[RMDB]
RNA sequence: GGGAACGACUCGAGUAGAGUCGAAAACUCGGGUGAGAACUCGAGUGGACCGAGUGGAAAAGAAAAUCCUGGCCAUAGUAGCAGCGUUAGUCGGGUAAGAAUCCCGAUGGCCGAAAGAGCAAGGGUUAUAAACGUUAGUAUUCGUACUAACGUUUAUAAAAGAAACAACAACAACAAC
Reactivity to DMS in 0.01 (KOAc 150mM, MgCl2 10mM, bicine 150mM(pH8.5), 24C), signal-to-noise 9, nucleotides 027 to 126: c000u000c000g010g010g010u010g000a210g000a170a020c000u000c000g000a020g000u000g000g010a170c020c020g010a110g020u010g010g010a070a060a100a100g010a080a070a070a060u000c020c020u000g010g010c020c020a100u020a100g010u010a110g010c090a100g000c080g010u010u010a100g030u000c010g010g000g010u010a110a130g010a140a110u020c000c000c000g000a020u000g000g010c010c010g000a050a070a110g000a090g000c050a070a050g000g000g020u000u000
Reactivity to 2A3 in 0.01 (KOAc 150mM, MgCl2 10mM, bicine 150mM(pH8.5), 24C), signal-to-noise 9, nucleotides 027 to 126: c000u010c000g000g010g010u030g030a110g010a050a010c000u000c010g000a000g000u020g000g020a020c010c020g000a070g080u190g050g140a110a120a090a100g160a040a120a030a030u050c010c010u020g040g000c010c010a040u040a110g110u080a020g070c100a020g010c050g060u030u080a070g040u050c000g000g010g000u080a160a090g090a100a060u100c000c010c000g000a010u030g010g000c000c010g040a070a070a020g040a010g010c040a040a040g060g000g000u030u000